[RMDB]
This 177-nucleotide RNA was probed chemically with DMS and 2A3.
RNA sequence: GGGAACGACUCGAGUAGAGUCGAAAAGCUCGGAGCGUAAUCGCGUCUUGACGUGAGUAGGGAUAGACUAGACUGUAGGCUAUCCCAGUGUGCAUAGCGCACAAUUCGCUGAUCUACAGUCAACAAAGUCUGAUUAAGCGUUCGCGCUUAAUCAGACAAAAGAAACAACAACAACAAC
Reactivity to DMS in 0.01 (KOAc 150mM, MgCl2 10mM, bicine 150mM(pH8.5), 24C), signal-to-noise 2, nucleotides 027 to 126: g010c020u000c020g020g000a070g010c000g010u000a130a100u000c010g020c000g010u010c040u020u010g010a020c000g010u000g010a060g010u000a190g020g010g000a020u000a000g000a030c030u000a120g000a010c000u000g020u000a010g000g000c010u000a010u010c000c000c000a060g000u010g010u000g010c010a190u000a110g030c280g040c000a020c020a060a030u010u000c010g030c000u000g000a090u010c050u000a020c010a000g000u000c010a130a120c300a060a080a070
Reactivity to 2A3 in 0.01 (KOAc 150mM, MgCl2 10mM, bicine 150mM(pH8.5), 24C), signal-to-noise 2, nucleotides 027 to 126: g080c030u030c070g090g080a020g000c010g010u030a020a030u030c000g010c000g050u010c090u100u270g110a000c010g000u010g020a020g010u040a040g020g010g000a000u000a010g030a030c000u000a070g000a010c010u020g000u020a000g000g000c000u000a010u010c000c000c000a000g000u000g000u000g000c060a120u190a280g090c030g000c040a000c010a000a100u050u040c010g000c020u030g020a050u010c000u010a010c000a010g010u000c000a020a010c040a020a080a020
Conditions: 150 mM KOAc, 10 mM MgCl2 and 150 mM bicine (pH 8.5), 24 C. Reactivities are given for positions 27 through 126.